The record gives the reactivity of an RNA of 177 nucleotides to DMS and 2A3. DMS adducts were read by reverse transcription with MarathonRT. The DMS profile rests on 4,559 reads.
[RMDB]
RNA sequence: GGGAACGACUCGAGUAGAGUCGAAAAGGCUCCACCUUCGGGUGGAGCCAUCUACCGAGAAAGCACCUCGGUAUAAAAGUGCAACCGUUGGAAACAAGGGAAUAAGCCCCUGGUUCGCCAGGGGCAACUAAUACCUAGCAUUCGUGCUAGGUAUUAGAAAAGAAACAACAACAACAAC
Reactivity to DMS in 0.01 (KOAc 150mM, MgCl2 10mM, bicine 150mM(pH8.5), 24C), signal-to-noise 3, nucleotides 027 to 126: g020g010c000u000c000c010a020c000c000u000u010c230g030g030g050u000g010g000a010g010c000c000a000u000c010u000a250c020c000g000a000g000a040a070a160g010c010a020c020c000u000c000g000g000u010a010u000a020a010a050a040g010u000g020c000a170a210c030c030g010u000u010g000g000a150a130a170c020a010a020g000g010g010a100a080u010a120a170g000c000c010c000c000u000g000g000u000u000c180g010c010c000a010g010g000g010g030c010a000a020
Reactivity to 2A3 in 0.01 (KOAc 150mM, MgCl2 10mM, bicine 150mM(pH8.5), 24C), signal-to-noise 2, nucleotides 027 to 126: g010g010c000u000c000c010a010c010c020u040u070c300g050g020g000u030g010g010a010g000c000c000a000u000c000u010a000c000c000g000a010g020a010a150a000g010c000a010c010c010u000c000g000g030u020a010u020a010a000a000a010g020u010g010c000a040a000c030c020g240u040u040g020g020a020a040a030c010a040a040g040g020g030a050a090u110a170a040g000c000c000c000c000u000g030g020u040u070c180g020c040c010a010g060g070g000g000c000a000a000